[RMDB]
RNA sequence: GGGAACGACUCGAGUAGAGUCGAAAAAUCUACGAAAUCAUCGGUCUAUUAGGCGAUCAAUCCCCAAUUCAAUCAAAAUAUUGUUUUCUCUCUCUCUCCAUAAACAAAUAGUAUUUUUGAUAUGACAAUAUUGGCAUUACUUCGGUAAUGCCAAUAUAAAAGAAACAACAACAACAAC
Reactivity to DMS in 0.01 (KOAc 150mM, MgCl2 10mM, bicine 150mM(pH8.5), 24C), signal-to-noise 3, nucleotides 027 to 126: a050u020c050u020a080c120g020a120a120a090u020c110a080u010c060g010g000u000c020u010a090u020u000a080g020g000c060g000a100u010c070a060a110u000c010c010c010c110a120a100u020u010c030a070a040u040c050a100a020a030a020u010a050u000u010g000u000u000u010u010c020u000c010u000c030u000c010u010c000u030c040c060a060u010a030a010a050c070a090a010a060u000a020g010u030a060u010u030u020u000u010g020a060u040a050u010g000a070c300a030
Reactivity to 2A3 in 0.01 (KOAc 150mM, MgCl2 10mM, bicine 150mM(pH8.5), 24C), signal-to-noise 4, nucleotides 027 to 126: a000u090c020u060a060c030g080a050a090a040u130c030a030u070c030g010g020u020c000u040a100u090u060a120g060g000c010g050a010u060c010a030a160u060c010c000c000c000a070a110u110u060c020a000a030u000c000a010a010a040a020u060a060u020u010g040u040u050u070u000c030u010c010u000c000u000c000u000c000u000c060c050a100u120a120a140a070c050a050a030a030u090a010g030u030a070u020u090u000u030u070g050a030u020a150u190g030a030c080a080

About this RNA
The record gives the reactivity of an RNA of 177 nucleotides to DMS and 2A3. The reactions ran in a buffer of 150 mM KOAc, 10 mM MgCl2 and 150 mM bicine (pH 8.5), at 24 C.